[RMDB]
RNA sequence: GGGAACGACUCGAGUAGAGUCGAAAACCGCACGCUGAAAGUCGAGUGAGCCUGCUCCAAAGGCUCUUUCGUUGAUUAUGUGUGCCAGAACAACGCCAUAGGUAUCAUUCUUCGUCUUCUUAGGCGCGUGCUUACAGAAGUUCGCUUCUGUAAGCACAAAAGAAACAACAACAACAAC
Reactivity to 2A3 in 0.01 (KOAc 150mM, MgCl2 10mM, bicine 150mM(pH8.5), 24C), signal-to-noise 2, nucleotides 027 to 126: c000c010g020c000a010c020g020c000u040g000a020a000a030g030u040c010g020a000g010u010g000a000g000c000c000u030g050c020u090c110c070a100a080a040g000g000c000u000c000u000u040u000c000g020u010u030g000a020u050u090a030u010g010u000g030u010g010c020c000a050g060a070a030c070a030a030c040g040c040c000a100u070a060g000g080u090a070u180c030a090u140u080c030u100u070c050g060u030c020u120u030c030u110u170a020g010g010c020g000c030
Reactivity to DMS in 0.01 (KOAc 150mM, MgCl2 10mM, bicine 150mM(pH8.5), 24C), signal-to-noise 2, nucleotides 027 to 126: c040c040g020c020a010c000g030c000u000g020a110a130a260g020u000c030g000a040g020u000g010a030g000c010c000u000g000c220u030c280c230a110a120a020g000g000c010u000c000u000u010u000c010g000u000u000g000a070u010u010a070u010g000u000g020u000g020c000c170a140g020a080a180c060a040a100c040g010c050c030a090u020a020g000g030u000a020u000c080a100u010u000c050u000u000c070g000u000c000u000u000c060u000u000a090g000g000c040g010c240

Conditions: 150 mM KOAc, 10 mM MgCl2 and 150 mM bicine (pH 8.5), 24 C. Chemical mapping of a 177-nucleotide RNA with 2A3 and DMS. For 2A3, 2,228 sequencing reads were counted. High DMS reactivity at an A or C suggests that its Watson-Crick edge is free. It was measured as part of the RMDB library RFMREP.